[RMDB]
RNA sequence: GGGAACGACUCGAGUAGAGUCGAAAAGUUACCGAUGUUCAGCAAAGGGCGCGGGAAGCUGUCCUCCUUUGAUUCGUCUAGUUUCGAGCCAUUUAACGAGAAAAGCAAUCUCCAGAGGCAGCACCAAUGUGCAAGUCGAUUUCGAUCGACUUGCACAAAAAGAAACAACAACAACAAC
Reactivity to DMS in 0.01 (KOAc 150mM, MgCl2 10mM, bicine 150mM(pH8.5), 24C), signal-to-noise 1, nucleotides 027 to 126: g000u020u000a050c050c020g000a010u000g010u020u000c020a080g030c110a090a140a160g000g000g050c150g000c060g000g130g000a100a040g040c000u000g000u000c000c000u030c040c040u000u100u000g000a060u000u000c110g000u030c070u020a300g030u000u000u000c000g000a000g000c210c050a070u100u000u000a050a150c250g000a160g030a000a000a070a000g040c140a120a000u000c020u000c070c230a030g000a000g000g000c040a000g000c000a200c030c080a010a100
An RNA of 177 nucleotides, treated with DMS and read out base by base. DMS adducts were read by reverse transcription with MarathonRT. The DMS profile rests on 1,026 reads. Reactivities are given for positions 27 through 126.